[RMDB]
Chemical mapping of a 177-nucleotide RNA with 2A3 and DMS. The 2A3 profile rests on 4,345 reads. For 2A3 the reverse transcriptase was SuperScript II with manganese. The RNA was probed in 150 mM KOAc, 10 mM MgCl2 and 150 mM bicine (pH 8.5) at 24 C. For DMS, 3,269 sequencing reads were counted.

RNA sequence: GGGAACGACUCGAGUAGAGUCGAAAAUGCCACGGCACGGUACCAGGACUUUUCCGGUAGUCAGAUCGACCAGGCUUUGCUGCUUCGGGUCAUCGACCAAUUCGGGUACGGCGAUGACGUCGAUCCGCGUUGAUUCACGUUUCGACGUGAAUCAACGAAAAGAAACAACAACAACAAC
Reactivity to 2A3 in 0.01 (KOAc 150mM, MgCl2 10mM, bicine 150mM(pH8.5), 24C), signal-to-noise 4, nucleotides 027 to 126: u130g040c010c000a040c040g030g000c020a020c100g030g000u040a070c020c030a110g000g060a030c030u050u070u090u010c030c000g030g010u010a030g030u030c040a010g010a100u020c020g010a020c010c010a010g020g010c000u080u070u140g030c050u010g010c000u020u040c030g050g000g030u020c010a010u010c020g180a280c000c010a070a110u150u130c030g050g000g040u130a170c020g010g000c010g030a050u130g080a090c000g040u020c010g010a040u020c020c030g020
Reactivity to DMS in 0.01 (KOAc 150mM, MgCl2 10mM, bicine 150mM(pH8.5), 24C), signal-to-noise 2, nucleotides 027 to 126: u000g040c000c000a160c050g010g000c030a070c050g000g000u010a030c040c020a110g010g020a080c110u010u010u050u010c290c000g000g030u020a050g010u010c020a070g000a020u010c050g000a060c050c020a060g000g000c020u000u040u040g040c020u010g000c030u000u000c100g030g000g010u030c030a010u000c050g020a210c030c000a000a120u000u000c070g030g060g040u000a120c140g000g000c030g020a150u010g010a110c090g010u040c000g000a030u050c030c060g000